This 207-nucleotide RNA was probed chemically with DMS and 2A3. Reactivities are given for positions 27 through 156. For 2A3, 544 sequencing reads were counted. It was measured as part of the RMDB library OK3TST.
[RMDB]
RNA sequence: GGGAACGACUCGAGUAGAGUCGAAAAGACUGAUUGGCUUGAAAGGAAAGAAGGAGAUAGAAUGGUGGAAUUUGAUCCUAGUUUGUAUCGACAAGAAGAUGGAUUAUUUUCAUUUUUGAAUUCCUUAGGAUCGUGGCAGAUAAAAUCUGAUGCUACACAUAAUCCGUCCCUUCGGGGACGGAUUAUGAAAAGAAACAACAACAACAAC
Reactivity to DMS in 0.01 (KOAc 150mM, MgCl2 10mM, bicine 150mM(pH8.5), 24C), signal-to-noise 1, nucleotides 027 to 156: g000a080c020u010g000a100u000u000g030g000c000u000u010g030a120a070a250g030g030a070a070a080g000a140a090g030g010a050g000a100u010a050g000a130a090u000g020g030u010g000g030a020a120u010u000u020g000a020u000c000c000u000a150g030u010u020u060g060u010a100u000c070g030a080c050a060a300g070a010a050g010a020u000g030g000a050u000u000a120u000u000u000u030c050a120u000u030u000u030u000g000a190a140u010u000c030c060u000u010a180g010g000a030u000c030g100u000g070g010c000a000g070a060u000a090a020a010a300u000c010u050g010a070u010g000c050u000a060c050a150
Reactivity to 2A3 in 0.01 (KOAc 150mM, MgCl2 10mM, bicine 150mM(pH8.5), 24C), signal-to-noise 2, nucleotides 027 to 156: g040a010c030u050g050a090u140u050g030g000c020u030u050g190a150a100a040g010g030a050a010a020g050a020a010g030g030a030g010a050u110a110g050a090a080u110g020g010u050g030g020a050a070u050u040u200g000a000u000c000c010u010a050g070u020u130u030g010u110a140u120c070g040a050c030a030a090g100a030a000g010a070u010g030g010a000u110u040a050u140u170u010u000c010a050u000u000u050u090u110g020a030a040u030u100c040c000u000u010a000g030g000a000u000c060g000u060g010g060c010a000g010a090u150a140a070a040a020u000c070u050g010a040u070g000c030u040a030c050a000